[RMDB]
RNA sequence: GGGAACGACUCGAGUAGAGUCGAAAAGAUAUGGAUGAUUUAGCUAGCUCAGUGGGUCGGAAACGACCCACGAGCUUGGACCUAACUGUCAUCCUAAGUCAAAGGGUGCAUGUUCGCAUGCACCCAAGUUACGUAGGAGGUUCGCCUCCUACGUAACAAAAGAAACAACAACAACAAC
Reactivity to DMS in 0.01 (KOAc 150mM, MgCl2 10mM, bicine 150mM(pH8.5), 24C), signal-to-noise 4, nucleotides 027 to 126: g000a020u000a230u000g010g000a010u000g010a040u010u000u000a010g010c030u000a010g010c000u010c000a180g050u000g000g000g020u010c000g030g000a050a060a170c000g020a010c000c010c000a000c000g000a000g030c000u000u010g010g010a090c300c010u000a010a020c300u010g010u000c000a010u000c000c010u000a030a140g000u000c020a130a150a210g000g000g010u000g000c010a000u000g010u000u020c210g010c000a000u000g000c000a010c010c000c000a000a010
Reactivity to 2A3 in 0.01 (KOAc 150mM, MgCl2 10mM, bicine 150mM(pH8.5), 24C), signal-to-noise 2, nucleotides 027 to 126: g020a010u040a030u130g000g000a000u010g010a000u010u070u050a030g000c040u000a010g010c020u000c110a100g010u010g000g030g000u020c010g030g000a090a070a040c030g000a010c010c020c000a010c020g010a000g000c000u000u100g000g010a000c020c000u020a040a070c090u090g030u050c000a000u040c000c000u010a080a010g050u010c070a100a100a170g000g000g010u000g010c000a010u000g030u070u140c300g010c230a000u000g000c000a000c000c000c000a000a000

The record gives the reactivity of an RNA of 177 nucleotides to DMS and 2A3. 2A3 adducts were read by reverse transcription with SuperScript II with manganese. Reactivities are given for positions 27 through 126. Conditions: 150 mM KOAc, 10 mM MgCl2 and 150 mM bicine (pH 8.5), 24 C. Reactivities are rounded to 0.1 and cut off at 0 and 3.